The record gives the reactivity of an RNA of 177 nucleotides to 2A3 and DMS.
For 2A3 the reverse transcriptase was SuperScript II with manganese.
The data come from the RNA Mapping Database (RMDB), library OK1LIB.
The DMS profile rests on 13,955 reads.
For 2A3, 22,872 sequencing reads were counted.

RNA sequence: GGGAACGACUCGAGUAGAGUCGAAAAAAGCACAGUGCCGAGAGCGUGAACCAAAGCGGGACCAUCGGUGCUUAGCCUAUCCGCUGGCGGCCCGGAACCGAGAAUGCGACCAGGUCACAACCCAGUCCGAAUUAGAGCUAUUCGUAGCUCUAAUUCGAAAAGAAACAACAACAACAAC
Reactivity to 2A3 in 0.01 (KOAc 150mM, MgCl2 10mM, bicine 150mM(pH8.5), 24C), signal-to-noise 9, nucleotides 027 to 126: a000a000g090c070a060c030a040g030u040g040c010c010g040a040g010a030g070c080g030u090g050a080a070c040c020a140a070a030g090c060g010g020g050a050c030c020a070u060c030g010g010u060g020c010u050u030a020g010c000c010u050a070u060c020c030g020c050u030g020g010c000g020g020c000c020c000g030g020a030a040c030c000g020a030g070a120a040u140g030c020g010a050c000c020a020g000g030u050c020a020c020a070a070c010c020c010a010g080u060c050
Reactivity to DMS in 0.01 (KOAc 150mM, MgCl2 10mM, bicine 150mM(pH8.5), 24C), signal-to-noise 6, nucleotides 027 to 126: a050a060g030c050a060c140a080g010u000g020c030c030g000a040g010a160g010c100g020u030g010a070a180c060c070a060a060a130g010c060g020g000g010a130c080c060a120u010c070g000g010u010g010c050u000u020a150g000c040c020u000a070u030c050c040g010c030u010g010g040c030g020g000c030c020c030g000g020a070a070c090c030g000a100g000a090a080u020g000c010g000a100c020c040a100g000g010u020c040a050c070a060a150c060c000c010a120g020u010c100